[RMDB]
RNA sequence: GGGAACGACUCGAGUAGAGUCGAAAAGAGCGAUUAGACGAAGGGGUAGAGCUACAUAUUAGAUAGCUGUAUAAUCGUUCAAGUUACAUCAAAACAUCUUCAAUAUUUAUUACUUACUUUCCUUUCUGCCAGAGUACGGUAUUCGUACCGUACUCAAGGUAAUUCCACCGUUCGCGGUGGAAUUACCAAAAGAAACAACAACAACAAC
Reactivity to 2A3 in 0.01 (KOAc 150mM, MgCl2 10mM, bicine 150mM(pH8.5), 24C), signal-to-noise 1, nucleotides 027 to 156: g030a010g010c040g010a000u000u000a000g020a060c090g020a140a000g000g000g000g010u050a060g070a040g070c000u000a000c060a140u110a240u300u030a100g210a300u000a000g030c000u000g000u110a030u030a040a000u030c000g020u000u000c000a000a000g010u050u110a060c020a070u090c050a030a000a000a140c010a070u000c000u300u130c010a150a090u170a300u230u140u140a170u080u080a060c020u090u000a000c000u010u030u060c010c020u130u110u030c000u100g050c030c020a070g000a000g000u000a000c000g000g000u040a040u000u080c070g060u020a000c010c010g000u000a000c000u000c000a000a000